The record gives the reactivity of an RNA of 177 nucleotides to 2A3 and DMS. The DMS profile rests on 947 reads. The reactions ran in a buffer of 150 mM KOAc, 10 mM MgCl2 and 150 mM bicine (pH 8.5), at 24 C. Values cover nucleotides 27 to 126. Values are in units of 0.01, from 0 to 300, in steps of 10. 2A3 adducts were read by reverse transcription with SuperScript II with manganese.
[RMDB]
RNA sequence: GGGAACGACUCGAGUAGAGUCGAAAAGGAAAUCAAGGUCAUGAAGCGCAUCCGCAAUGUCGAGGUGUGCAUCGAGGCCACCGUGACCCGCCACGGCACCGUGAUCGGCCCGGCGAUGACGAGCCUGGUUCCGAUACCGAUUCGUCGGUAUCGGAACAAAAGAAACAACAACAACAAC
Reactivity to 2A3 in 0.01 (KOAc 150mM, MgCl2 10mM, bicine 150mM(pH8.5), 24C), signal-to-noise 2, nucleotides 027 to 126: g090g000a020a110a090u160c100a100a120g000g020u020c010a090u140g010a060a020g000c010g020c000a020u000c040c010g000c090a280a300u260g120u300c010g040a080g080g000u010g010u050g000c020a020u000c020g030a050g000g000c020c000a020c010c020g000u020g090a090c000c020c000g000c050c000a020c030g000g000c050a030c090c070g040u070g080a020u020c000g000g130c030c020c040g020g000c020g040a030u050g060a010c030g020a010g010c000c000u060g050
Reactivity to DMS in 0.01 (KOAc 150mM, MgCl2 10mM, bicine 150mM(pH8.5), 24C), signal-to-noise 1, nucleotides 027 to 126: g000g040a060a080a090u030c180a090a110g010g010u010c000a070u000g000a050a090g000c060g000c010a000u000c020c020g000c090a180a170u000g000u000c040g000a170g030g000u000g000u000g050c000a070u000c020g000a090g070g000c000c030a060c030c070g000u000g000a150c020c050c000g020c130c020a020c130g000g000c090a040c130c020g000u000g000a050u010c040g000g000c100c000c020g000g000c000g050a160u000g010a030c040g000a120g000c020c020u040g010